[RMDB]
RNA sequence: GGGAACGACUCGAGUAGAGUCGAAAACGACAAUGUCACACUGCUACCUUAGCUCCAUCGACUCUCUAGCUAUCGAGAUUCCUUACGAGUUACCCUCGGAUAUCAGCAUGAUUUUGCUACUUCCUGGAAGUCAGGGGCUAAAUGCCGUGGAGAGCUCAGUAGGUUUUUGUUUCGACAAAAACCUACUAAAAGAAACAACAACAACAAC
Reactivity to 2A3 in 0.01 (KOAc 150mM, MgCl2 10mM, bicine 150mM(pH8.5), 24C), signal-to-noise 2, nucleotides 027 to 156: c020g050a020c040a070a240u210g030u080c000a030c000a000c070u020g040c040u080a130c060c030u110u090a000g000c050u060c040c040a130u050c080g010a000c000u070c000u000c030u040a030g050c000u050a090u150c050g000a000g020a040u010u030c010c010u030u040a050c070g020a070g060u060u070a150c070c000c000u000c040g040g000a050u040a020u170c040a010g040c000a040u090g210a270u220u090u150u090g060c000u040a080c070u090u090c020c000u030g020g110a100a060g020u010c020a040g030g000g000g010c000u050a050a030a000u060g000c010c010g000u020g000g050a120g040a000g040c010u000c100